[RMDB]
RNA sequence: GGGAACGACUCGAGUAGAGUCGAAAAACUGCCAUACGUGGCAGAAACACGCCUUGCCAGGACUAAACAGCGUGUCUAAAAAACAGUCCUUCAUACCUGAUCUGGAGGGUAGAUCAGGAAUACUAAAAAAAUCGGGUGAAGUUCGCUUCACCCGAAAGUGUAACCAACUGUUCGCAGUUGGUUACACAAAAGAAACAACAACAACAAC
Reactivity to 2A3 in 0.01 (KOAc 150mM, MgCl2 10mM, bicine 150mM(pH8.5), 24C), signal-to-noise 2, nucleotides 027 to 156: a000c000u000g000c010c010a010u020a030c140g080u000g000g000c000a000g030a000a020a000c000a010c010g000c000c030u060u130g050c040c090a010g020g000a040c020u030a050a100a100c030a040g000c000g000u010g000u020c090u030a010a020a020a010a000a000c040a020g030u020c030c010u060u050c090a070u080a170c000c000u000g020a000u020c010u020g050g080a060g100g050g070u050a010g000a000u020c020a000g070g000a010a010u140a080c080u170a000a000a010a020a000a040a130u030c000g000g000g000u000g000a000a000g010u020u020c100g040c080u000u000c000a000c000c000c000g000a000a000a000

Source: RMDB library M2RFOK, as collected in RNAgym. The record gives the reactivity of an RNA of 207 nucleotides to 2A3. The 2A3 profile rests on 1,467 reads. For 2A3 the reverse transcriptase was SuperScript II with manganese.